An RNA of 177 nucleotides, treated with 2A3 and read out base by base. Source: RMDB library OK1LIB, as collected in RNAgym. Reactivities are rounded to 0.1 and cut off at 0 and 3. Conditions: 150 mM KOAc, 10 mM MgCl2 and 150 mM bicine (pH 8.5), 24 C. For 2A3, 641 sequencing reads were counted.

[RMDB]
RNA sequence: GGGAACGACUCGAGUAGAGUCGAAAAUCGACGUUGGCCGCACCAUAGCGCACUUCCCGCUGGUUGCCGGCUUGCUCGCAACGGACUCGGUCGACAGCGCGCCGGUGGGCCAUGGUCAAAAGCCAGGGGGACAACAACUGUUCGCAGUUGUUGUCCCAAAAGAAACAACAACAACAAC
Reactivity to 2A3 in 0.01 (KOAc 150mM, MgCl2 10mM, bicine 150mM(pH8.5), 24C), signal-to-noise 1, nucleotides 027 to 126: u220c020g010a050c130g010u000u000g000g000c000c000g240c010a000c000c000a050u120a010g000c000g010c070a010c180u050u030c000c000c000g010c010u080g130g000u150u090g000c010c010g000g030c030u030u110g020c050u070c110g000c040a170a000c050g000g130a140c100u090c020g000g000u030c060g080a050c020a090g000c000g000c000g030c030c020g010g060u000g010g060g000c030c000a020u100g030g000u030c000a030a030a020a030g070c000c030a030g210g020